[RMDB]
RNA sequence: GGGAACGACUCGAGUAGAGUCGAAAACGCUGGGACGGAGCUUUCCCAAUAUGGAGCUGAAGCGCGCACGGCGAUGAAGUAUUGAGCGAAAGCCCGUCCUGUGCUGAAGCGCGCACGGCAACCGAAAGGUGCGACCACUCGGGGUUCGCCCCGAGAAGGCAUUAUACUACUUCGGUAGUAUAAUGCCAAAAGAAACAACAACAACAAC
Reactivity to 2A3 in 0.01 (KOAc 150mM, MgCl2 10mM, bicine 150mM(pH8.5), 24C), signal-to-noise 3, nucleotides 027 to 156: c010g000c010u020g010g030g000a000c000g020g000a110g010c000u010u020u010c020c000c000a000a000u010a010u000g000g000a010g000c010u020g020a280a020g030c010g000c000g000c000a010c030g010g000c030g270a300u030g000a010a000g010u000a000u010u020g040a030g050c290g040a010a000a000g010c010c000c000g000u000c000c000u000g000u000g000c000u040g010a180a060g000c000g000c000g000c000a000c020g010g000c050a020a040c020c010g100a130a040a040g020g010u030g010c020g040a020c010c010a050c010u000c000g000g000g000g040u080u060c190g130c000c010c010c000g020a020g010a020a050
Reactivity to DMS in 0.01 (KOAc 150mM, MgCl2 10mM, bicine 150mM(pH8.5), 24C), signal-to-noise 1, nucleotides 027 to 156: c060g020c010u000g010g030g010a030c000g010g000a130g010c010u000u000u000c010c010c000a000a050u020a020u000g010g010a180g000c000u010g000a100a070g000c030g070c040g000c010a300c070g000g020c000g020a070u000g010a150a300g000u000a030u000u010g020a100g000c170g030a030a030a040g010c000c000c000g000u000c030c000u000g000u010g040c000u010g020a120a110g010c030g000c010g030c010a300c060g000g010c000a020a070c010c030g000a100a080a160g010g000u000g020c000g000a220c040c030a200c040u010c020g000g000g000g030u000u010c120g030c070c010c000c000g020a030g030a100a220
The data come from the RNA Mapping Database (RMDB), library RNAMAK. An RNA of 207 nucleotides, treated with 2A3 and DMS and read out base by base. For DMS the reverse transcriptase was MarathonRT. Reactivities are given for positions 27 through 156. The 2A3 profile rests on 6,461 reads.